[RMDB]
RNA sequence: GGGAACGACUCGAGUAGAGUCGAAAAGAUAUGGACUACCCACCAUCUGAACUACGAGCAAUGCGUCGGAAACGACGCGACUCGCAGAUGAGGUCCUAAGUCAAACGACGUUGUUCGCAACGUCGAACUGCGCAAGUAAGUUCGCUUACUUGCGCAGAAAAGAAACAACAACAACAAC
Reactivity to DMS in 0.01 (KOAc 150mM, MgCl2 10mM, bicine 150mM(pH8.5), 24C), signal-to-noise 2, nucleotides 027 to 126: g020a090u000a110u010g010g020a020c000u000a120c010c000c020a300c100c010a000u000c010u000g000a060a070c080u030a300c000g000a000g000c100a140a120u010g010c000g000u000c000g000g000a090a100a150c010g000a000c000g020c010g000a010c000u000c020g000c010a010g010a010u000g000a080g000g010u010c000c010u010a050a140g010u000c040a110a150a290c010g000a020c000g000u010u000g020u000u000c300g010c010a010a010c000g000u000c000g000a020a090
Reactivity to 2A3 in 0.01 (KOAc 150mM, MgCl2 10mM, bicine 150mM(pH8.5), 24C), signal-to-noise 2, nucleotides 027 to 126: g000a020u130a080u240g000g010a000c020u240a250c020c050c000a030c010c030a000u040c010u030g040a060a100c060u140a080c300g000a000g040c080a210a160u300g000c010g000u040c010g000g000a050a070a020c000g020a010c000g080c000g000a020c000u000c000g000c010a000g010a010u010g000a000g080g000u020c000c030u030a300a030g090u090c100a110a070a100c030g020a000c000g020u020u000g030u040u090c300g000c100a000a010c000g000u010c000g000a020a000

An RNA of 177 nucleotides, treated with DMS and 2A3 and read out base by base.
The reactions ran in a buffer of 150 mM KOAc, 10 mM MgCl2 and 150 mM bicine (pH 8.5), at 24 C.
The 2A3 profile rests on 2,869 reads.
The data come from the RNA Mapping Database (RMDB), library TTRDEL.